The data come from the RNA Mapping Database (RMDB), library OK2TST. Chemical mapping of a 177-nucleotide RNA with DMS and 2A3. DMS adducts were read by reverse transcription with MarathonRT. The DMS profile rests on 1,339 reads.

RNA sequence: GGGAACGACUCGAGUAGAGUCGAAAAAUGCAUAUCAGAAGAUUCACAAGGAGCAUCCGCAGGUCGUCCUCGUCGUGCACAUUCUUCCACAGUCGCAGUCGAACGAGUACGAGUGGAUGAAGGUGUAUGGACCUAUCAUCUUCGGAUGAUAGGUCCAAAAAGAAACAACAACAACAAC
Reactivity to DMS in 0.01 (KOAc 150mM, MgCl2 10mM, bicine 150mM(pH8.5), 24C), signal-to-noise 2, nucleotides 027 to 126: a070u010g020c040a030u000a050u000c090a140g010a100a100g010a070u000u000c080a040c140a090a140g010g010a060g000c020a010u000c030c040g010c060a140g010g000u000c030g000u000c030c000u000c050g020u000c050g030u010g000c020a000c060a100u010u010c050u000u000c060c040a050c110a110g000u000c110g040c110a060g000u000c030g010a110a120c050g020a050g020u000a010c020g000a050g000u010g010g000a000u000g000a020a020g030g010u000g030u010a080
Reactivity to 2A3 in 0.01 (KOAc 150mM, MgCl2 10mM, bicine 150mM(pH8.5), 24C), signal-to-noise 2, nucleotides 027 to 126: a030u090g030c040a030u040a000u080c040a050g070a200a000g050a120u050u090c070a000c030a090a120g200g030a030g000c010a030u020c010c000g020c050a010g050g200u050c000g000u040c010c000u000c020g030u000c010g030u030g060c040a020c000a070u140u080c060u160u060c030c010a080c010a060g080u070c070g060c000a090g040u040c030g080a190a130c050g000a020g000u040a030c000g040a020g030u030g000g030a010u010g020a020a040g100g000u020g000u030a060
Conditions: 150 mM KOAc, 10 mM MgCl2 and 150 mM bicine (pH 8.5), 24 C.